[RMDB]
RNA sequence: GGGAACGACUCGAGUAGAGUCGAAAACCGAAGCCCCAUUGAGGGAUAAUACAGGCUCUCCCAUCCAACUCCUUUUCCAACACGUCCUCGUCGUACAGAGUGGUAACAUGUGUCACCACAUAUCCAACAUAGUGUCGCAUCUUCGGAUGCGACACAACUUACCCGUACUCUUCGGAGUACGGGUAAGAAAAGAAACAACAACAACAAC
Reactivity to 2A3 in 0.01 (KOAc 150mM, MgCl2 10mM, bicine 150mM(pH8.5), 24C), signal-to-noise 1, nucleotides 027 to 156: c000c000g000a010a000g010c000c060c060c000a040u120u160g010a190g080g020g060a020u110a120a040u150a160c040a010g070g000c000u040c000u000c020c000c000a040u060c060c040a060a050c010u030c000c010u020u000u040u000c010c030a060a030c070a060c120g020u000c000c000u030c010g030u000c030g000u050a010c030a050g110a050g130u030g070g000u030a040a000c000a180u160g110u060g080u160c010a040c040c010a030c000a020u060a040u030c010c000a030a020c010a130u200a010g000u000g000u000c010g000c000a000u000c000u020u140c050g070g070a010u000g000c000g000a000c000a020c010a010a000